[RMDB]
RNA sequence: GGGAACGACUCGAGUAGAGUCGAAAAUUUCUGUCGCGGGAUCAACUGCAACCGCUUGUUGCGCCGCAGGUAUCGCACUUGAGACAGGUACCAUUGCGAACCAUCGUGAAGUUCUGGCACUCGCUGAAGGUACUGGUAUGUUCGCAUACCAGUACCUAAAAGAAACAACAACAACAAC
Reactivity to DMS in 0.01 (KOAc 150mM, MgCl2 10mM, bicine 150mM(pH8.5), 24C), signal-to-noise 2, nucleotides 027 to 126: u020u020u010c020u010g000u010c040g000c040g020g000g000a130u010c080a050a080c050u000g020c030a050a090c160c240g020c100u010u000g010u010u000g010c040g040c170c200g020c020a010g000g020u000a040u000c080g050c090a050c130u000u000g020a150g000a060c080a040g010g020u000a060c020c020a180u020u000g010c030g010a060a110c090c030a050u020c090g030u000g000a070a080g010u000u000c060u000g020g020c090a090c100u010c040g000c060u010g000a120
Reactivity to 2A3 in 0.01 (KOAc 150mM, MgCl2 10mM, bicine 150mM(pH8.5), 24C), signal-to-noise 1, nucleotides 027 to 126: u020u040u010c010u010g050u020c090g020c050g030g110g030a090u040c000a010a080c050u090g040c030a140a130c050c060g030c020u040u190g070u040u030g020c040g030c050c010g000c020a010g000g020u020a020u050c050g000c050a040c090u030u060g190a040g030a080c040a080g000g030u000a010c020c010a060u000u100g000c010g010a100a090c020c000a040u060c020g040u020g210a050a040g000u010u100c000u030g000g030c090a010c050u050c010g080c060u050g050a090